[RMDB]
RNA sequence: GGGAACGACUCGAGUAGAGUCGAAAAGGGCCGUUCACUGGGUCCGAAGCCUCUAGAAGGAUAAUAUAGGCACUCCAUACCCUACUCCGACUCAAUACGUCCCCGUCGUACAGAAUGGUAACAUAUCGAACACAACCUAACUUCGGUUAGGUUGUAAACUUCUUAAGCUCUUCGGAGCUUAAGAAGUAAAAGAAACAACAACAACAAC
Reactivity to DMS in 0.01 (KOAc 150mM, MgCl2 10mM, bicine 150mM(pH8.5), 24C), signal-to-noise 1, nucleotides 027 to 156: g050g050g020c030c000g000u000u020c060a150c110u020g020g010g020u000c010c020g010a060a160g010c000c000u000c030u000a090g000a120a070g030g000a110u000a120a130u000a220u010a150g020g020c030a120c060u000c010c040a180u030a060c000c010c010u000a130c020u020c050c000g020a070c020u000c000a190a090u000a070c050g000u000c000c010c000c020g000u020c020g030u030a160c120a140g010a090a080u010g000g000u000a090a240c110a070u010a160u000c050g020a100a130c130a050c000a010a000c000c000u000a020a000c020u000u000c300g050g000u000u000a010g000g000u000u020g000u010a020a040
Reactivity to 2A3 in 0.01 (KOAc 150mM, MgCl2 10mM, bicine 150mM(pH8.5), 24C), signal-to-noise 2, nucleotides 027 to 156: g020g010g000c000c000g050u180u080c040a000c180u070g050g000g000u000c010c010g030a060a040g020c020c010u040c040u120a140g100a240a090g110g000a070u130a230a050u130a080u060a100g010g030c040a010c060u090c000c000a050u060a080c020c000c000u020a050c030u030c010c040g050a050c000u020c040a020a170u050a170c030g030u090c000c000c010c030g080u070c020g080u080a040c050a050g140a070a160u080g070g030u120a130a000c010a040u080a120u160c020g040a040a020c010a000c020a070a000c000c000u000a000a000c000u020u060c080g090g010u030u000a000g000g020u000u000g010u010a000a000